[RMDB]
RNA sequence: GGGAACGACUCGAGUAGAGUCGAAAAGUUUACUUCUUCACUCAAACCGAAACAGGUAAAAAAGCAUGGGCUAGUUUUGUAGACUUCUUGAAGAGUGCAUGGGACGGAAUAGUUUCGUUCUUUAGCGGUAUCGGACAAUGGUUUGCUGAUAUAUGGAACCUGAUCCUAAAUUCGUUUAGGAUCAGGUAAAAGAAACAACAACAACAAC
Reactivity to DMS in 0.01 (KOAc 150mM, MgCl2 10mM, bicine 150mM(pH8.5), 24C), signal-to-noise 3, nucleotides 027 to 156: g030u010u000u000a080c030u010u000c040u000u000c020a150c030u000c050a090a140a230c080c010g010a110a100a150c090a090g010g020u010a000a050a050a090a100a050g020c020a050u000g020g010g030c030u000a060g010u000u000u010u010g020u000a090g010a080c050u000u000c010u010u000g010a070a110g000a080g020u000g030c050a100u010g010g000g010a040c040g020g010a050a120u000a110g010u000u000u000c010g020u010u000c030u000u000u000a100g020c030g020g020u000a050u000c050g010g020a090c060a060a120u000g020g000u000u010u010g030c020u000g010a090u000a070u010a140u000g000g000a190
Reactivity to 2A3 in 0.01 (KOAc 150mM, MgCl2 10mM, bicine 150mM(pH8.5), 24C), signal-to-noise 3, nucleotides 027 to 156: g020u050u070u060a090c020u030u050c000u040u100c050a080c020u110c030a070a060a050c030c020g070a090a120a070c060a070g000g050u160a070a020a010a060a050a020g060c050a040u050g000g030g000c020u030a020g040u040u070u070u130g070u030a020g030a070c000u030u030c000u070u120g040a070a030g020a020g040u070g010c010a030u070g000g000g030a010c040g060g060a060a050u130a200g050u050u020u020c010g020u030u020c000u050u070u060a060g010c040g010g000u030a050u100c020g010g010a010c040a070a080u080g060g000u040u050u080g030c000u000g010a000u020a010u030a040u180g060g020a000